This 207-nucleotide RNA was probed chemically with 2A3. Values cover nucleotides 27 to 156.

[RMDB]
RNA sequence: GGGAACGACUCGAGUAGAGUCGAAAAGAAAGAAAGAAAGCGGUUGGGUGGGUCCAUCGACCGUCGUGGCGUAUUCGGACGCUUUACCACGAGGCGAGGAAAUAGCGAGACCGACCACCCCCUUUAACAGAGGUAUAGUAGUUCGCUACUAUACCAACUACCUUUAGCACUUCGGUGCUAAAGGUAGAAAAGAAACAACAACAACAAC
Reactivity to 2A3 in 0.01 (KOAc 150mM, MgCl2 10mM, bicine 150mM(pH8.5), 24C), signal-to-noise 1, nucleotides 027 to 156: g040a020a020a010g050a010a140a000g050a110a020a000g040c050g010g100u120u120g120g000g020u030g060g000g120u000c000c030a090u000c060g180a300c010c000g120u130c020g000u040g000g000c020g010u080a080u120u130c110g080g000a040c010g040c110u100u070u080a040c020c010a020c020g000a000g000g060c020g000a020g060g020a060a060a080u100a080g080c070g040a060g040a080c000c020g020a030c000c010a040c000c000c000c000c000u070u060u070a090a060c090a040g090a040g060g000u000a010u000a000g010u000a020g000u010u000c090g030c120u000a000c000u010a000u020a020c000c000a000a000

The RNA was probed in 150 mM KOAc, 10 mM MgCl2 and 150 mM bicine (pH 8.5) at 24 C. The 2A3 profile rests on 687 reads. 2A3 adducts were read by reverse transcription with SuperScript II with manganese.